[RMDB]
RNA sequence: GGGAACGACUCGAGUAGAGUCGAAAAUGCGUUUGGAAGAAUCGUGGAAAUGGUAAAACGGAUCCGAUAACGUCCAACCGCCGAUUGACGGUAAUACUUUGACGUUGGGAUUCGCUUUUUUCACGGCCAUAAUCUGUCCAAAAUUGCCUUUAUACGGCUUAGGCGGAAACUUCGGUUUCCGCCUAAGAAAAGAAACAACAACAACAAC
Reactivity to 2A3 in 0.01 (KOAc 150mM, MgCl2 10mM, bicine 150mM(pH8.5), 24C), signal-to-noise 2, nucleotides 027 to 156: u000g000c000g050u000u000u000g010g000a020a010g000a100a010u040c010g000u000g000g050a040a050a120u170g030g060u220a030a080a030a000c050g010g010a030u000c000c000g130a100u050a090a000c000g010u000c010c010a020a050c040c030g020c000c040g170a160u120u300g080a090c010g000g040u040a140a130u190a300c100u060u130u130g000a000c000g030u000u010g000g030g000a000u000u030c000g010c050u130u000u000u000u030u030c030a000c010g000g040c000c000a010u040a070a000u030c010u030g300u000c000c010a020a050a030a060u170u240g030c000c010u100u150u120a170u150a140c090g060g060